Chemical mapping of a 207-nucleotide RNA with 2A3.
RNA sequence: GGGAACGACUCGAGUAGAGUCGAAAAGAUGGGUCCGAUGGAUUAAUGCGUCGCCAGCCAUUGGAUCCUGAUUGAUAGAUUGAAGGCGACGGUCGGAUCACUCGGUAAUUCGGUGCUCCACGAGUGAUCCGUGAUGAUAGUUAAGAAGAGCACCUAAGAUAGCAGUCACGUUCGCGUGACUGCUAUCAAAAGAAACAACAACAACAAC
Reactivity to 2A3 in 0.01 (KOAc 150mM, MgCl2 10mM, bicine 150mM(pH8.5), 24C), signal-to-noise 1, nucleotides 027 to 156: g180a120u090g000g010g000u010c000c000g000a000u000g000g050a030u100u220a210a020u210g080c010g020u000c000g010c000c000a000g060c050c000a000u000u000g000g000a000u000c000c000u000g000a010u000u270g000a020u010a050g100a060u030u210g080a100a000g000g010c000g000a000c000g000g000u020c000g000g000a000u000c000a000c010u020c000g010g130u190a100a130u100u040c010g010g000u000g040c040u010c010c000a000c000g000a000g000u000g000a000u000c000c000g010u010g020a000u070g000a000u030a220g100u210u100a040a140g050a000a030g000a100g000c000a000c000c000u000a040a000

The 2A3 profile rests on 558 reads. The RNA was probed in 150 mM KOAc, 10 mM MgCl2 and 150 mM bicine (pH 8.5) at 24 C. Source: RMDB library OK3TST, as collected in RNAgym.